Notes
An RNA of 207 nucleotides, treated with 2A3 and read out base by base.
RNA sequence: GGGAACGACUCGAGUAGAGUCGAAAAGGGGUCGUCUCAUUAACGAGGCAGAGACAUGAUCUGAAGCCUCCACGGAUCAACAGCUCUGCUACCCACCGUUAGGGAGACGACGGAGGCACCCAAAAACUUCGUGUCGAGUUCGCUCGACACGAAGUAACCCUUGCUGUACGUUCGCGUACAGCAAGGGAAAAGAAACAACAACAACAAC
Reactivity to 2A3 in 0.01 (KOAc 150mM, MgCl2 10mM, bicine 150mM(pH8.5), 24C), signal-to-noise 1, nucleotides 027 to 156: g090g000g000g000u040c000g010u000c000u000c010a040u020u000a000a010c010g000a010g000g000c000a000g010a000g010a010c100a200u260g010a010u030c010u010g040a120a010g020c000c000u000c000c000a030c040g010g000a000u020c010a090a100c030a060g040c010u000c000u030g040c010u040a050c090c140c040a080c020c000g010u000u010a000g020g060g020a000g000a000c010g010a010c010g000g000a000g000g010c010a050c010c000c020a030a030a070a110a060c000u000u000c010g000u020g000u010c000g020a020g010u080u110c200g060c140u000c000g000a000c000a000c000g000a000a000g010u000a010a010
Overview
Conditions: 150 mM KOAc, 10 mM MgCl2 and 150 mM bicine (pH 8.5), 24 C. The data come from the RNA Mapping Database (RMDB), library RNAMAK. For 2A3 the reverse transcriptase was SuperScript II with manganese.